[RMDB]
RNA sequence: GGGAACGACUCGAGUAGAGUCGAAAAUCUUCUUGUUGAUUCGCCGGAGCUCCUUCUCGGCUAUUCGCUUUUUCUUCCUUUCCUCUACCCACUGCUCGAGGGCCUCCUCCCUCGCCUUCGAGCCGGGCAUUGGGUAUUAGUUCGCUAAUACCCAAUGAAAAGAAACAACAACAACAAC
Reactivity to 2A3 in 0.01 (KOAc 150mM, MgCl2 10mM, bicine 150mM(pH8.5), 24C), signal-to-noise 2, nucleotides 027 to 126: u030c010u150u000c040u070u120g050u070u100g050a070u070u070c040g000c020c000g100g020a020g020c020u030c020c000u120u030c060u020c020g000g020c020u030a040u050u070c020g030c010u080u040u010u030u050c020u020u040c010c000u040u020u040c020c000u020c010u050a090c000c000c030a080c060u070g000c000u010c000g000a010g010g000g000c010c020u080c000c010u030c000c020c000u020c020g000c000c000u000u020c000g000a000g000c000c000g000g000g010
Reactivity to DMS in 0.01 (KOAc 150mM, MgCl2 10mM, bicine 150mM(pH8.5), 24C), signal-to-noise 4, nucleotides 027 to 126: u010c050u000u010c080u020u000g010u010u000g000a110u000u000c080g000c050c050g020g000a110g000c080u000c050c020u000u000c030u010c050g010g000c040u000a060u010u000c060g010c050u000u010u000u010u010c050u010u000c030c020u000u000u000c010c010u000c090u000a170c010c010c020a120c230u000g000c000u010c000g010a020g010g000g010c030c110u010c050c040u010c010c000c020u000c100g010c000c010u010u010c000g010a020g010c010c210g000g010g010